[RMDB]
RNA sequence: GGGAACGACUCGAGUAGAGUCGAAAAUGCGCGAGACUCUAUGCCCGUGACAGAGUGGUAUCAGAGCAGACUUGCUUUACAUCAAUGCCCAGCAGUUCACUCGAUGAUGCACAACUCCAGGGCCAGCGUUGUACUACGAGUUCGCUCGUAGUACAACAAAAGAAACAACAACAACAAC
Reactivity to 2A3 in 0.01 (KOAc 150mM, MgCl2 10mM, bicine 150mM(pH8.5), 24C), signal-to-noise 3, nucleotides 027 to 126: u090g040c030g020c010g060a030g050a070c000u000c030u060a070u140g020c010c000c010g120u050g050a050c070a050g110a000g030u040g010g020u030a020u050c040a000g000a010g000c030a020g050a060c010u060u170g030c000u120u100u120a080c040a030u120c060a150a170u140g040c020c010c020a010g010c000a000g040u000u060c030a030c070u040c040g140a140u120g000a010u020g000c040a030c020a190a120c000u000c000c010a060g050g000g050c020c020a050g070c020
Reactivity to DMS in 0.01 (KOAc 150mM, MgCl2 10mM, bicine 150mM(pH8.5), 24C), signal-to-noise 2, nucleotides 027 to 126: u000g020c040g030c050g000a140g010a110c010u000c060u000a060u010g020c020c010c010g000u000g040a140c210a110g000a070g000u010g000g020u000a020u000c060a100g000a040g020c090a130g000a050c020u000u000g010c040u000u000u000a100c090a080u000c170a080a110u000g000c050c010c080a090g000c040a050g000u020u000c080a120c020u000c020g000a160u000g010a060u000g010c030a060c080a090a060c040u010c000c060a110g020g000g020c040c120a080g010c110